[RMDB]
RNA sequence: GGGAACGACUCGAGUAGAGUCGAAAAGAUAUGGACGCUAUCGCUAGAUCCCGCAUUCGGAAACGAAUGUGGGAUCUUGGACCGAGUAGCGUCCUAAGUCAAAGGUUGAGCCUUCGGGCUCAACCAACAUAUCUCACGUGUUCGCACGUGAGAUAUGAAAAGAAACAACAACAACAAC
Reactivity to 2A3 in 0.01 (KOAc 150mM, MgCl2 10mM, bicine 150mM(pH8.5), 24C), signal-to-noise 3, nucleotides 027 to 126: g020a030u080a040u180g010g000a000c000g010c000u000a000u030c000g000c040u010a010g000a020u000c000c000c000g000c000a010u000u000c000g020g060a060a100a100c020g000a020a010u000g010u010g000g020g010a000u000c000u000u010g000g010a020c020c030g020a040g140u040a000g000c000g010u000c000c000u010a050a010g030u020c050a110a070a080g000g010u000u000g000a010g010c010c030u060u120c300g050g020g000c000u010c000a000a000c000c000a000a000
Reactivity to DMS in 0.01 (KOAc 150mM, MgCl2 10mM, bicine 150mM(pH8.5), 24C), signal-to-noise 5, nucleotides 027 to 126: g010a040u000a300u000g020g000a010c000g020c000u000a030u000c010g000c030u000a030g010a020u000c000c000c000g010c000a000u000u010c000g010g010a140a100a220c000g010a010a000u000g030u000g010g000g000a000u000c000u000u000g010g000a120c300c050g000a040g010u010a010g010c000g010u000c000c000u000a000a050g010u000c040a100a160a100g000g010u000u000g000a010g010c000c010u000u010c250g030g000g010c000u000c000a000a000c000c000a030a060